[RMDB]
The record gives the reactivity of an RNA of 177 nucleotides to 2A3 and DMS.
2A3 adducts were read by reverse transcription with SuperScript II with manganese.
RNA sequence: GGGAACGACUCGAGUAGAGUCGAAAACACUGGCGUCCAGCGGAGAAACAGGAGCUCGUCUCCUUCCUUUCGCUGCUGGCUCCACAUCCGGUCGUCGCUGAAGACUCCUUCCUUUCGCUGCUGGCUCGUCUAAUAUGUAGUUCGCUACAUAUUAGACAAAAGAAACAACAACAACAAC
Reactivity to 2A3 in 0.01 (KOAc 150mM, MgCl2 10mM, bicine 150mM(pH8.5), 24C), signal-to-noise 9, nucleotides 027 to 126: c070a010c060u040g030g000c020g060u100c020c010a010g000c010g060g010a030g000a030a090a130c300a190g000g010a010g010c050u120c270g290u110c060u010c000c000u010u050c000c000u010u020u020c020g010c030u010g010c000u000g000g000c010u010c000c010a040c000a070u040c030c010g010g040u030c020g020u020c030g000c060u060g030a060a020g050a100c030u050c010c000u030u060c010c000u040u080u070c060g010c030u070g010c010u030g030g030c040u040c080
Reactivity to DMS in 0.01 (KOAc 150mM, MgCl2 10mM, bicine 150mM(pH8.5), 24C), signal-to-noise 7, nucleotides 027 to 126: c100a120c200u000g000g000c070g000u010c010c010a010g020c010g010g000a050g000a010a010a020c220a010g000g010a020g020c030u010c300g000u010c000u000c000c000u000u010c050c020u000u000u000c010g010c000u000g000c010u000g000g000c050u010c010c010a060c130a100u000c040c030g010g010u010c040g010u000c050g010c040u000g000a090a090g000a080c040u000c030c020u000u010c020c020u000u000u010c070g010c020u000g010c040u000g010g000c070u000c090